Structure probing data (2A3 and DMS) for a 207-nucleotide construct.
RNA sequence: GGGAACGACUCGAGUAGAGUCGAAAACUGCCAGUUAGGAAUUUGUAUCAAGUGUUCAAUCUUUGCAGUCACUGAGCACUGACAGAGUUGUAUGCAAGAAGCAAGCAAAGGACACAGCUGUUGUAACUUUAGUUUCACUGGUUUGAGUCUCACAACAGGUCAUAAAAUCAUUCGUGAUUUUAUGACCAAAAGAAACAACAACAACAAC
Reactivity to 2A3 in 0.01 (KOAc 150mM, MgCl2 10mM, bicine 150mM(pH8.5), 24C), signal-to-noise 2, nucleotides 027 to 156: c020u000g020c000c000a050g050u050u080a140g000g090a100a080u140u080u090g080u140a190u120c050a090a050g000u010g040u000u000c030a030a090u030c070u060u100u070g070c060a000g000u000c000a010c150u180g070a020g060c080a010c030u020g090a110c000a000g030a000g010u020u030g030u060a080u110g010c010a000a070g110a050a010g100c010a070a000g000c030a000a020a110g020g070a030c020a010c010a090g080c050u110g010u150u010g030u080a040a040c040u080u090u090a060g010u030u060u010c030a010c010u000g040g000u020u180u050g020a020g040u000c020u040c020a050c040a070a120c030a050
Reactivity to DMS in 0.01 (KOAc 150mM, MgCl2 10mM, bicine 150mM(pH8.5), 24C), signal-to-noise 3, nucleotides 027 to 156: c050u000g030c030c020a120g010u010u010a120g000g020a050a120u010u000u000g000u000a160u010c040a080a190g010u000g020u000u000c020a030a060u010c030u010u010u010g020c060a100g000u010c040a260c100u000g010a060g010c080a030c000u000g010a080c030a080g010a120g020u000u000g020u000a100u060g000c030a050a190g000a080a300g000c010a070a170g020c040a030a070a080g020g010a170c090a070c080a130g010c010u000g020u010u000g030u010a060a100c040u000u010u000a130g010u000u000u000c010a110c040u000g020g010u010u000u000g010a150g020u000c060u000c060a100c100a040a070c100a110
Source information: Source: RMDB library OK3TST, as collected in RNAgym. For DMS the reverse transcriptase was MarathonRT. The reactions ran in a buffer of 150 mM KOAc, 10 mM MgCl2 and 150 mM bicine (pH 8.5), at 24 C. 2A3 adducts were read by reverse transcription with SuperScript II with manganese.